[RMDB]
RNA sequence: GGGAACGACUCGAGUAGAGUCGAAAAAAAAAAGAUAUGGAAGCGAUUUCCAGCUCUUGGAUUUAUAGGCGAGUCGGAAACGACGAGCCUAUUGUCAGAGCGGAGGAUCGCUUCCUAAGUCAAAAAACCUUCUAUUUAACUUCGGUUAAAUAGAAGGAAAAGAAACAACAACAACAAC
Reactivity to DMS in 0.01 (KOAc 150mM, MgCl2 10mM, bicine 150mM(pH8.5), 24C), signal-to-noise 1, nucleotides 027 to 126: a000a040a130a090a030a150g000a010u010a300u010g010g010a010a000g040c000g000a010u010u010u010c000c010a210g010c000u010c000u010u010g010g010a030u010u010u000a010u000a000g020g010c020g000a300g030u000c000g030g020a110a110a120c020g000a000c000g000a300g010c000c000u010a000u010u000g000u000c010a030g000a010g010c010g000g010a030g020g010a000u000c000g010c000u000u000c000c000u030a040a040g010u000c010a020a050a090a070a080a060